[RMDB]
The record gives the reactivity of an RNA of 177 nucleotides to DMS and 2A3.

RNA sequence: GGGAACGACUCGAGUAGAGUCGAAAAGAAGGAGAUGAAAGCGACUUUAGAAUCGGCUAACUGAGCAGUCAGAUGCAGACGGCAAGUAUCGUCGCCAGAGAUACAGUCGCAAAUAGCCGUAGGAGAAGCAUACGUAUGGGUUCGCCCAUACGUAUGCAAAAGAAACAACAACAACAAC
Reactivity to DMS in 0.01 (KOAc 150mM, MgCl2 10mM, bicine 150mM(pH8.5), 24C), signal-to-noise 3, nucleotides 027 to 126: g000a110a130g040g010a130g020a050u040g010a080a090a050g000c020g010a080c030u000u000u000a110g010a110a190u010c030g010g010c000u020a130a190c120u000g000a120g030c100a040g010u010c090a100g000a140u010g000c140a070g000a080c020g000g000c050a080a030g050u000a020u000c070g010u030c020g010c120c130a040g010a100g010a090u000a040c010a130g000u000c010g020c030a030a080a090u000a060g010c010c000g000u020a060g000g010a110g030a110a130
Reactivity to 2A3 in 0.01 (KOAc 150mM, MgCl2 10mM, bicine 150mM(pH8.5), 24C), signal-to-noise 4, nucleotides 027 to 126: g130a040a030g050g070a100g020a060u120g100a090a070a010g000c020g010a020c000u090u090u050a040g030a080a060u020c020g040g000c020u020a070a040c020u050g070a010g030c030a010g070u050c050a000g010a150u100g070c020a010g030a030c000g020g020c020a040a140g000u080a040u100c080g030u010c030g000c020c010a000g020a000g000a040u030a020c010a030g010u020c010g000c000a000a060a010u020a010g030c000c000g030u050a050g020g150a050g020a130a010
High DMS reactivity at an A or C suggests that its Watson-Crick edge is free. The 2A3 profile rests on 3,001 reads. Conditions: 150 mM KOAc, 10 mM MgCl2 and 150 mM bicine (pH 8.5), 24 C.